This 177-nucleotide RNA was probed chemically with DMS and 2A3. For DMS, 3,321 sequencing reads were counted. For DMS the reverse transcriptase was MarathonRT. Values cover nucleotides 27 to 126.
RNA sequence: GGGAACGACUCGAGUAGAGUCGAAAAAAAAGAUAUGGAGUGCCUACCCACCUCCAUGGUGACAAUGAUGUGGCAUCGGAAACGAUGCCAUUGAGUCAUCAUGGAGAGGGCACUCCUAAGUCAAAAAUCAUUAUAAUUUGUUCGCAAAUUAUAAUGAAAAAGAAACAACAACAACAAC
Reactivity to DMS in 0.01 (KOAc 150mM, MgCl2 10mM, bicine 150mM(pH8.5), 24C), signal-to-noise 3, nucleotides 027 to 126: a080a050a100a120g000a110u000a140u000g010g010a020g040u000g010c010c000u000a170c030c020c060a300c050c000u010c000c000a000u000g000g000u000g000a020c010a260a220u000g000a070u020g000u000g000g010c010a010u000c010g000g010a060a050a130c010g010a020u010g000c000c010a010u000u000g000a080g010u000c000a000u000c010a000u000g000g000a030g000a030g000g000g010c010a000c000u000c000c000u000a000a050g000u030c060a030a100a100a130a090
Reactivity to 2A3 in 0.01 (KOAc 150mM, MgCl2 10mM, bicine 150mM(pH8.5), 24C), signal-to-noise 1, nucleotides 027 to 126: a000a010a000a000g130a090u160a070u090g000g000a000g000u000g010c010c010u080a300c040c030c030a030c000c000u000c000c000a010u010g010g010u000g000a010c010a300a300u090g050a040u090g080u040g010g000c000a000u010c010g000g010a080a090a020c020g010a010u030g000c050c000a000u000u000g000a000g010u000c000a010u000c000a000u010g000g000a020g000a000g010g000g000c000a000c000u010c000c000u000a020a000g000u010c030a060a060a030a060a300